[RMDB]
Conditions: 150 mM KOAc, 10 mM MgCl2 and 150 mM bicine (pH 8.5), 24 C. An RNA of 207 nucleotides, treated with 2A3 and read out base by base.

RNA sequence: GGGAACGACUCGAGUAGAGUCGAAAACUGGCGUCGUCCGGCUCCCUCGACCGCACCGGAGCGCUAGAAAAGGUCCUCGGACUUUCUUCUACUCCGAAGCCGGUUUGAGGCCCGGCGAAACGCGGGCCUGUCUCCUAAGAUGCCUCCGCUAGUCGAGCAUACGUAUGCCCUUCGGGGCAUACGUAUGAAAAGAAACAACAACAACAAC
Reactivity to 2A3 in 0.01 (KOAc 150mM, MgCl2 10mM, bicine 150mM(pH8.5), 24C), signal-to-noise 1, nucleotides 027 to 156: c030u030g070g020c000g040u040c000g040u080c040c050g080g020c070u300c010c010c000u000c000g000a010c000c010g000c020a020c100c000g010g000a050g030c240g020c180u040a010g010a010a020a020a010g000g010u030c000c010u090c300g130g010a010c000u070u000u000c030u090u000c000u030a030c010u000c000c000g000a050a010g110c200c040g020g130u030u010u260g010a000g050g000c030c010c000g010g000c020g030a010a010a010c050g010c030g000g030g000c020c050u050g090u040c030u070c040c020u090a050a070g030a070u140g020c000c000u040c020c000g010c070u070a040g050u140c040g030a060g110
For 2A3, 646 sequencing reads were counted. For 2A3 the reverse transcriptase was SuperScript II with manganese.